RNA sequence: GGGAACGACUCGAGUAGAGUCGAAAAGCUUCCUGUCCGCCCUCCGACGCCGCUCGCCGCUCCUCAUGGAUGCCGCAGGCUCGUCACGGACGCACGCGUAACCCCCUCCUCGUUACGCCAAGCUGUUAGGGAUUAAAUUCUUCGGAAUUUAAUCCCUAAAAGAAACAACAACAACAAC
Reactivity to DMS in 0.01 (KOAc 150mM, MgCl2 10mM, bicine 150mM(pH8.5), 24C), signal-to-noise 1, nucleotides 027 to 126: g010c180u000u000c000c000u010g010u010c030c070g000c060c010c020u040c100c040g000a130c170g000c000c100g000c060u040c060g010c000c120g010c010u000c000c030u040c180a120u040g040g000a040u010g000c040c100g080c040a000g000g000c000u000c040g000u030c000a100c110g000g020a100c070g020c090a070c090g000c000g010u010a130a010c010c070c120c050c000u000c000c070u000c040g000u030u000a040c050g020c020c010a030a040g000c000u020g020u000u020
Reactivity to 2A3 in 0.01 (KOAc 150mM, MgCl2 10mM, bicine 150mM(pH8.5), 24C), signal-to-noise 2, nucleotides 027 to 126: g050c020u020u020c000c000u010g040u010c010c000g020c030c020c020u090c070c020g060a010c010g010c030c020g030c020u070c020g010c000c010g020c010u000c000c000u120c100a080u190g080g000a080u160g020c000c020g030c020a030g020g030c040u020c010g030u000c010a040c080g010g030a010c010g020c000a020c010g010c020g020u040a040a040c000c000c010c000c000u030c040c010u030c040g040u070u010a060c040g000c010c000a080a060g010c010u020g040u130u030
Source: RMDB library RFM100, as collected in RNAgym. Structure probing data (DMS and 2A3) for a 177-nucleotide construct. The RNA was probed in 150 mM KOAc, 10 mM MgCl2 and 150 mM bicine (pH 8.5) at 24 C. For 2A3, 1,610 sequencing reads were counted.